Record summary: Structure probing data (DMS and 2A3) for a 307-nucleotide construct. High 2A3 reactivity points to a flexible backbone, as in loops and unpaired stretches. 2A3 adducts were read by reverse transcription with SuperScript II with manganese. DMS adducts were read by reverse transcription with MarathonRT. The RNA was probed in 150 mM KOAc, 10 mM MgCl2 and 150 mM bicine (pH 8.5) at 24 C. In probing experiments dimethyl sulfate is read out at A N1 and C N3, which are open when not base-paired.
RNA sequence: GGGAACGACUCGAGUAGAGUCGAAAAGAAGUCAUGCUCCUCCAAUGUGUCGGUCGCGCACGAUGCAUCCGGCAAAAGGGUGUACUACCUCACCCGUGACCCCACCACCCCCCUCGCACGGGCUGCGUGGGAGACAGUUAGACACACUCCAGUCAACUCCUGGCUAGGCAAUAUCAUCAUGUAUGCGCCCACCCUAUGGGCGAGGAUGAUUCUGAUGACUCAUUUCUUCUCUAUCCUUCUAGCUCAGGAGCAACUUGAAAAAGCCAAGCGUCUACUUCGGUAGACGCAAAAGAAACAACAACAACAAC
Reactivity to DMS in 0.01 (KOAc 150mM, MgCl2 10mM, bicine 150mM(pH8.5), 24C), signal-to-noise 5, nucleotides 027 to 266: g010a140a100g000u010c050a040u000g010c050u010c020c020u000c060c070a130a100u010g020u000g020u000c020g020g010u010c060g010c050g010c070a060c090g000a100u000g010c010a070u010c060c060g000g000c090a050a040a100a130g010g010g000u000g000u010a100c140u010a090c160c080u000c050a030c020c010c000g020u010g000a140c090c000c020c040a070c170c050a180c090c040c000c030c020c020u000c130g000c050a060c140g000g010g030c290u000g010c080g020u000g000g000g000a060g000a080c100a080g000u000u010a120g000a070c050a050c070a080c110u000c040c050a050g000u000c050a120a240c030u000c000c010u000g000g000c000u000a010g000g020c060a060a050u000a050u010c060a080u010c130a050u020g020u000a050u000g000c010g010c000c000c000a080c150c120c120u020a110u010g010g000g000c010g000a010g010g000a020u000g010a050u000u010c110u010g000a060u000g010a050c150u010c080a090u010u010u010c040u010u010c040u000c050u010a060u010c020c010u000u000c010u000a020g000c010u010c020a020g000g000a030g010c190a070a040c030u000u000g000a050a080a090a080a150g000c100c090a070a160
Reactivity to 2A3 in 0.01 (KOAc 150mM, MgCl2 10mM, bicine 150mM(pH8.5), 24C), signal-to-noise 4, nucleotides 027 to 266: g080a070a000g030u050c020a030u080g040c030u040c030c020u080c030c010a090a120u090g050u010g030u030c040g020g020u050c060g020c010g050c060a030c080g020a020u100g010c010a010u040c010c030g050g060c070a030a030a040a050g040g020g000u050g020u030a140c060u060a050c030c050u030c010a020c000c010c010g000u010g070a100c010c030c000c000a030c030c010a030c010c020c020c000c010c000u040c030g060c020a050c060g020g010g000c020u040g030c030g000u020g000g070g010a020g000a020c040a020g050u170u180a030g060a020c030a000c000a010c100u000c020c010a020g010u030c040a090a090c040u000c000c000u000g000g000c000u010a010g020g000c030a080a060u050a030u160c110a020u030c020a030u300g050u100a060u070g070c000g000c010c000c000a060c060c050c010u140a210u170g000g010g000c000g000a010g000g000a010u050g030a010u140u050c070u170g060a050u060g050a050c040u040c110a080u100u180u070c040u100u010c040u030c020u060a080u050c000c010u030u060c010u010a010g040c060u080c300a020g010g010a010g000c000a020a020c000u000u030g070a060a000a000a030a090g190c100c050a070a010